About this RNA
Chemical mapping of a 207-nucleotide RNA with DMS and 2A3.
[RMDB]
RNA sequence: GGGAACGACUCGAGUAGAGUCGAAAAUCCCUUUUCGAAGGGAAAAUGAGAUAUGGACUCUACCGAGUUGUCAGUAUGCGUGAAUCGGAAACGAUUCGCAUACUUGGAUUUACGUUUGACGUAGAGUCCUAAGUCAACCACGGUUAUUCGUAACCAAAUUUGCAUUGAGAUUCGUCUCAAUGCAAAUAAAAGAAACAACAACAACAAC
Reactivity to DMS in 0.01 (KOAc 150mM, MgCl2 10mM, bicine 150mM(pH8.5), 24C), signal-to-noise 3, nucleotides 027 to 156: u000c000c010c000u000u000u000u020c120g020a090a070g020g060g000a030a050a100a060u000g010a190g020a130u010a170u000g020g000a050c000u000c000u000a040c000c000g010a090g010u000u000g020u000c040a030g010u000a010u000g000c000g010u000g020a040a010u010c010g010g000a180a130a270c010g020a030u000u000c000g020c000a010u000a000c000u000u010g010g000a280u000u000u000a010c030g020u000u000u000g000a110c090g020u000a040g010a070g010u000c020c010u000a020a110g010u000c040a060a100c060c020a120c200g020g030u010u010a040u000u010c170g020u000a010a140c020c010a030a180
Reactivity to 2A3 in 0.01 (KOAc 150mM, MgCl2 10mM, bicine 150mM(pH8.5), 24C), signal-to-noise 9, nucleotides 027 to 156: u010c010c000c000u000u010u010u030c160g100a030a000g060g010g050a070a050a050a100u280g060a150g030a120u160a110u210g080g000a010c000u000c000u000a010c000c010g010a020g010u000u000g000u000c000a000g000u000a000u010g000c040g050u140g260a030a020u000c000g010g040a070a070a070c010g000a000u080u070c000g000c000a000u000a000c000u010u060g060g000a030u060u090u090a030c040g080u070u210u300g180a050c030g000u020a030g010a010g140u030c010c010u040a080a040g030u040c050a040a060c040c050a070c100g010g010u030u010a040u080u140c210g030u070a030a030c000c000a060a090
Source: RMDB library RNAMAK, as collected in RNAgym. For 2A3 the reverse transcriptase was SuperScript II with manganese.